[RMDB]
Structure probing data (2A3 and DMS) for a 207-nucleotide construct. For DMS, 1,678 sequencing reads were counted. For 2A3, 818 sequencing reads were counted. The data come from the RNA Mapping Database (RMDB), library OK3TST.
RNA sequence: GGGAACGACUCGAGUAGAGUCGAAAAGGCGAUGGAGAGGCCCUCUCAUUAAUGCGGAGUUGUCACGCUGACAGAAUGAUAUUAGAUGUCCGCUUCCGGUUACAUCGCGGCGAUGAUUACAUAGGACAUCGAUUACCCAUUCGCUUCGGGGAAGCAAGCUACUAGGACUGUUCGCAGUCCUAGUAGCAAAAGAAACAACAACAACAAC
Reactivity to 2A3 in 0.01 (KOAc 150mM, MgCl2 10mM, bicine 150mM(pH8.5), 24C), signal-to-noise 2, nucleotides 027 to 156: g080g000c090g050a040u120g010g070a090g000a050g080g060c020c040c000u010c010u000c000a130u090u210a140a020u160g030c060g010g070a040g000u070u040g020u110c060a000c080g020c030u020g020a040c010a040g110a040a030u040g060a010u030a130u160u150a020g000a070u010g010u000c020c050g010c020u150u020c030c000g000g000u070u010a040c020a040u050c090g050c060g130g000c080g030a040u090g040a100u150u110a110c040a110u170a050g000g000a000c010a000u020c000g000a000u020u070a040c010c030c050a040u100u130c020g000c000u030u030c040g000g000g000g000a000a000g020c030a010a010
Reactivity to DMS in 0.01 (KOAc 150mM, MgCl2 10mM, bicine 150mM(pH8.5), 24C), signal-to-noise 1, nucleotides 027 to 156: g010g090c090g020a190u000g040g000a130g000a140g010g040c000c010c010u010c040u000c030a110u010u010a070a120u000g020c090g000g020a230g000u000u010g030u000c020a100c020g060c000u010g000a130c080a090g000a040a020u000g020a040u000a090u000u010a160g010a090u000g000u010c000c020g010c060u000u010c030c120g060g000u000u000a060c090a040u010c130g010c120g020g000c060g000a040u010g000a080u000u000a060c130a220u000a110g010g000a040c000a110u000c020g000a140u010u000a050c080c060c050a120u000u000c070g000c060u000u000c030g020g000g050g030a080a120g010c030a100a300